An RNA of 207 nucleotides, treated with 2A3 and DMS and read out base by base.
For 2A3, 1,830 sequencing reads were counted.
Source: RMDB library M2RFPK, as collected in RNAgym.
Reactivities are given for positions 27 through 156.
[RMDB]
RNA sequence: GGGAACGACUCGAGUAGAGUCGAAAAAUACACCAGCAGUAGGACUCAGCGACCGUCACAACAAGGUUGUGCUGGUAUCCGACGGUCGUAUAGUCCUGUCUUGCAGGUUGCCUUGCACUGACGUGCCACACCAUUUACAGAUUCGUCUGUAAAUGAAGACUUAAGACCCUUUCGAGGGUCUUAAGUCAAAAGAAACAACAACAACAAC
Reactivity to 2A3 in 0.01 (KOAc 150mM, MgCl2 10mM, bicine 150mM(pH8.5), 24C), signal-to-noise 3, nucleotides 027 to 156: a020u160a010c090a010c010c000a010g000c000a000g010u140a000g000g000a000c000u000c050a010g000c000g000a000c000c010g000u000c020a020c050a220a160c090a300a160g050g030u030u030g000u040g000c040u020g050g000u010a040u040c040c040g000a000c000g000g000u010c000g000u010a030u030a040g000u000c010c020u000g000u030c010u010u090g010c010a010g040g030u090u120g060c040c010u030u070g010c010a040c080u110g080a040c070g020u000g040c040c000a070c000a010c050c020a000u010u010u000a000c000a000g010a020u000u100c120g070u010c140u000g000u000a000a000a000u010g010a020a000
Reactivity to DMS in 0.01 (KOAc 150mM, MgCl2 10mM, bicine 150mM(pH8.5), 24C), signal-to-noise 2, nucleotides 027 to 156: a130u000a040c080a130c040c020a090g010c050a100g030u000a060g000g000a060c000u010c090a180g000c020g000a020c000c000g020u000c030a210c140a100a060c120a150a110g000g030u000u010g020u010g000c010u000g000g000u000a050u000c060c020g020a050c020g060g050u010c010g040u000a040u000a050g000u010c020c000u020g010u010c010u000u000g030c020a110g020g020u000u000g000c020c110u020u020g030c020a070c030u000g030a130c160g000u010g040c010c050a110c060a120c130c000a000u000u000u000a010c000a010g000a070u000u000c280g000u010c000u000g020u000a000a000a000u000g010a060a130